[RMDB]
RNA sequence: GGGAACGACUCGAGUAGAGUCGAAAAUCAGAUGCAAGGCCAUGAAAUUAGCCACCUGCGUAUUUUUUUAUGCAAUUUAAAUGCCAGCGGCUAAGCUUUAAGACAACCAGUCUAACGGAUUGACCGCAUGAAAUGCGACAUUCGUGUCGCAUUUCAUAAAAGAAACAACAACAACAAC
Reactivity to DMS in 0.01 (KOAc 150mM, MgCl2 10mM, bicine 150mM(pH8.5), 24C), signal-to-noise 5, nucleotides 027 to 126: u010c060a090g000a110u030g000c050a050a050g010g010c020c040a070u010g030a080a100a140u010u020a080g000c010c020a040c220c040u010g000c130g020u000a000u000u000u010u010u010u000u020a060u040g020c110a070a030u010u020u010a020a050a050u000g000c000c030a020g000c220g020g010c010u010a030a060g000c060u000u000u020a100a060g010a050c040a060a080c100c110a130g000u010c020u000a050a110c160g000g000a080u000u000g000a110c000c010g010c100
Reactivity to 2A3 in 0.01 (KOAc 150mM, MgCl2 10mM, bicine 150mM(pH8.5), 24C), signal-to-noise 6, nucleotides 027 to 126: u070c010a000g020a080u090g050c040a050a100g040g000c020c020a050u080g060a050a070a060u060u020a020g000c000c000a060c040c010u030g000c060g030u020a050u010u090u020u000u010u050u070a180u150g080c060a060a040u040u100u120a090a040a000u040g010c000c020a010g000c010g020g000c000u010a030a030g020c000u050u090u070a070a020g030a010c000a050a090c130c050a010g010u010c020u030a070a010c050g050g010a020u020u050g070a080c000c010g010c020